Source information: This 207-nucleotide RNA was probed chemically with DMS and 2A3. The 2A3 profile rests on 2,151 reads. For 2A3 the reverse transcriptase was SuperScript II with manganese. The reactions ran in a buffer of 150 mM KOAc, 10 mM MgCl2 and 150 mM bicine (pH 8.5), at 24 C.
RNA sequence: GGGAACGACUCGAGUAGAGUCGAAAAGCUGGGAAUUGGUAUUUGUGAGUGAUGAUGAGAUAGCACAGCAGCAUUCUGGUUCUGGCUCCAAUAACCAGAAUCCCUGGCAUAUUAUCCAGUUGCCCAAAUGAACCCCAAAAUGAGAAGGAAAAGACUAGGUUUUAGUGAUAUUCGUAUCACUAAAACCAAAAGAAACAACAACAACAAC
Reactivity to DMS in 0.01 (KOAc 150mM, MgCl2 10mM, bicine 150mM(pH8.5), 24C), signal-to-noise 2, nucleotides 027 to 156: g010c120u000g010g050g010a100a120u000u000g010g020u000a080u010u000u000g020u000g010a080g040u000g010a040u010g020a060u010g020a170g020a220u000a120g020c030a180c010a040g030c020a040g000c000a120u000u020c040u020g000g010u000u000c010u000g020g020c020u010c070c290a110a160u000a060a030c000c000a040g000a050a080u010c000c050c020u000g010g010c070a130u000a100u000u000a060u000c050c000a100g000u000u000g010c000c030c010a010a120a120u000g010a050a200c030c020c020c020a070a050a050a150u010g000a150g040a110a090g000g030a080a070a130a070g020a060c050u000a170
Reactivity to 2A3 in 0.01 (KOAc 150mM, MgCl2 10mM, bicine 150mM(pH8.5), 24C), signal-to-noise 4, nucleotides 027 to 156: g020c040u030g010g020g040a050a050u050u020g020g020u080a070u050u100u060g050u060g050a080g010u080g040a060u030g010a030u040g000a040g050a130u100a050g070c060a030c020a110g060c000a000g010c010a020u050u000c010u080g000g000u030u010c010u050g060g010c030u080c090c020a030a040u080a070a010c000c000a000g020a010a010u000c050c000c000u010g030g000c020a040u050a040u170u070a040u080c030c020a000g020u050u040g100c010c000c000a010a040a040u080g010a050a100c010c000c010c000a000a060a060a120u250g030a070g030a080a060g050g020a030a090a020a070g140a040c080u290a120